[RMDB]
RNA sequence: GGGAACGACUCGAGUAGAGUCGAAAAGUUUUUAACGCGUGUGCACCCGCUAACACGAAUUACCCAGUUAUUUUCGACUUUACUCGAGUCGUUAUAGCGUGAGUUCGCGGAGUUCUCCGCGAAAUAAACUCCACUUAAGGUUCGCCUUAAGUGGAGUAAAAGAAACAACAACAACAAC
Reactivity to DMS in 0.01 (KOAc 150mM, MgCl2 10mM, bicine 150mM(pH8.5), 24C), signal-to-noise 2, nucleotides 027 to 126: g000u000u010u030u020u010a040a070c210g020c000g010u000g020u000g010c090a120c080c080c120g020c090u000a060a050c040a010c010g010a060a110u000u010a110c030c020c060a120g030u000u000a110u000u000u000u000c010g000a010c010u000u000u000a030c000u000c010g000a030g010u000c000g010u000u010a010u010a090g020c070g020u020g010a120g030u000u000c000g030c020g000g000a050g000u000u010c180u000c010c000g030c000g000a000a010a030u010a050a090